[RMDB]
RNA sequence: GGGAACGACUCGAGUAGAGUCGAAAAGAUCUGAGAACAAAUAUUGACUCCAGAGGACAGGUACCUGAUGUGCUUACUAAGUAUCUGAAUAGGUACCACCUACAACAGCUGAUCUUAGUUUAAGCAAUAUAUGGGUCAUCUUCGGAUGACCCAUAUAAAAAGAAACAACAACAACAAC
Reactivity to DMS in 0.01 (KOAc 150mM, MgCl2 10mM, bicine 150mM(pH8.5), 24C), signal-to-noise 2, nucleotides 027 to 126: g000a090u010c030u000g000a090g010a060a270c110a070a140a150u000a050u000u000g010a160c030u000c070c060a120g000a090g030g030a060c140a140g000g010u000a050c000c010u010g000a100u000g020u000g040c020u000u010a060c180u000a060a010g060u000a070u000c020u010g000a160a160u000a000g000g000u010a030c090c100a060c010c000u000a060c100a080a100c180a000g000c190u020g020a040u000c010u000u000a020g000u000u000u010a060a040g010c090a080a080